RNA sequence: GGGAACGACUCGAGUAGAGUCGAAAAUCAUUCUGUGCAUUUCCCUCGCAAUUUUGUCGUGGUCUACUGUAUCAAAUGCCUUCUCGUAGUCAACGAAUACAGCACCCGUACGAUAUUGGUGCGUGGGCUGCCCCGUCCAGUUCGCUGGACGGGGCAGAAAAGAAACAACAACAACAAC
Reactivity to 2A3 in 0.01 (KOAc 150mM, MgCl2 10mM, bicine 150mM(pH8.5), 24C), signal-to-noise 1, nucleotides 027 to 126: u080c010a000u020u080c060u030g170u070g080c000a130u000u130u130c000c150c080u000c050g010c000a050a080u030u050u030u070g040u000c000g010u020g010g100u000c070u120a110c000u000g180u000a000u040c100a040a050a290u050g000c000c000u300u040c210u070c110g000u060a080g060u050c000a080a000c040g050a040a000u080a010c000a000g020c000a290c000c090c000g000u040a000c000g060a060u000a000u100u140g030g000u040g000c010g070u170g080g050g110

Notes
An RNA of 177 nucleotides, treated with 2A3 and read out base by base. The RNA was probed in 150 mM KOAc, 10 mM MgCl2 and 150 mM bicine (pH 8.5) at 24 C. 2A3 is a SHAPE reagent: it acylates the 2'-hydroxyl of flexible nucleotides of all four kinds. 2A3 adducts were read by reverse transcription with SuperScript II with manganese. For 2A3, 318 sequencing reads were counted. Values cover nucleotides 27 to 126.